[RMDB]
RNA sequence: GGGAACGACUCGAGUAGAGUCGAAAAUGCCUGUUCGCAGGCAGACGCCUCCUAAGUCAGUAAGCCAUACGAGAUCGAUAAGUAUCGGAAACGAUACUUUUGACGAUCGAUGAGUAUGGACUUACUGAUAUGGAACUACGCAAGUUUCGACUUGCAAAUAUGCUUAACAGUUCGCUGUUAAGCAUAUAAAAGAAACAACAACAACAAC
Reactivity to DMS in 0.01 (KOAc 150mM, MgCl2 10mM, bicine 150mM(pH8.5), 24C), signal-to-noise 4, nucleotides 027 to 156: u000g030c000c000u000g030u000u010c280g060c050a040g040g030c010a050g010a050c030g000c010c300u000c010c020u000a060a300g010u000c020a030g010u010a010a020g010c030c000a010u000a030c000g000a230g010a010u010c000g020a150u000a030a010g010u000a000u000c010g010g010a140a160a300c010g050a030u010a010c000u000u000u000u000g020a240c160g010a030u000c000g010a120u010g010a250g010u000a010u000g010g020a100c000u010u000a010c010u010g010a000u000a180u010g010g000a080a060c040u000a030c030g020c000a040a040g030u000u000u000c050g000a220c070u000u000g010c030a060a080
Reactivity to 2A3 in 0.01 (KOAc 150mM, MgCl2 10mM, bicine 150mM(pH8.5), 24C), signal-to-noise 7, nucleotides 027 to 156: u030g000c010c000u010g010u040u070c300g030c080a010g000g000c000a000g020a010c100g090c020c000u020c020c000u060a120a030g010u000c000a000g000u000a010a000g000c000c010a010u000a000c020g040a010g010a170u010c010g030a030u010a070a010g010u000a000u000c000g020g050a070a070a030c000g010a010u010a020c010u030u010u000u070g210a070c020g020a020u010c000g040a120u120g040a020g000u000a000u000g000g010a060c000u000u000a000c000u010g000a000u000a000u010g020g000a080a070c110u160a080c180g000c000a000a020g000u060u120u220c180g150a060c010u000u000g000c000a040a050
Source: RMDB library RNAMAK, as collected in RNAgym.
The record gives the reactivity of an RNA of 207 nucleotides to DMS and 2A3.
2A3 adducts were read by reverse transcription with SuperScript II with manganese.
The RNA was probed in 150 mM KOAc, 10 mM MgCl2 and 150 mM bicine (pH 8.5) at 24 C.
DMS (dimethyl sulfate) methylates the pairing face of unpaired adenines and cytosines.